[RMDB]
RNA sequence: GGGAACGACUCGAGUAGAGUCGAAAACAACUGUUAUCUUGCCACUGCAUUGUUAACACACCAACAAAUAGAGUUGAAGUUUAAUCCACCUGCUCUACAAAGGGCUGGUGAAGCUGCUAACUUUUGUACCUACUAUGUUCUUCGGAACAUAGUAGGUAAAAGAAACAACAACAACAAC
Reactivity to 2A3 in 0.01 (KOAc 150mM, MgCl2 10mM, bicine 150mM(pH8.5), 24C), signal-to-noise 1, nucleotides 027 to 126: c000a000a050c050u040g040u130u000a080u060c060u030u040g000c000c090a200c090u060g040c020a010u040u070g020u020u060a070a010c050a010c000a010c080c040a060a060c040a080a110a100u190a080g040a000g040u060u080g050a060a010g020u000u100u160a070a070u070c020c010a000c000c030u000g010c000u010c000u050a100c000a060a170a060g000g000g000c000u020g010g020u000g000a000a010g030c000u090g030c000u010a080a040c000u000u020u000u110g040u030
Reactivity to DMS in 0.01 (KOAc 150mM, MgCl2 10mM, bicine 150mM(pH8.5), 24C), signal-to-noise 2, nucleotides 027 to 126: c080a080a090c210u010g000u000u010a070u000c040u010u000g000c020c200a040c170u000g050c010a070u000u000g000u000u000a040a030c040a020c150a130c080c070a070a060c090a030a060a140u000a120g000a050g010u000u000g000a080a070g000u000u000u000a130a100u010c140c020a010c030c000u000g010c010u000c000u000a140c300a040a130a060g010g010g000c000u000g000g030u000g000a040a040g010c020u010g010c090u010a060a050c030u000u000u000u010g030u000
Description
An RNA of 177 nucleotides, treated with 2A3 and DMS and read out base by base. The DMS profile rests on 1,333 reads. The reactions ran in a buffer of 150 mM KOAc, 10 mM MgCl2 and 150 mM bicine (pH 8.5), at 24 C. DMS adducts were read by reverse transcription with MarathonRT. For 2A3 the reverse transcriptase was SuperScript II with manganese.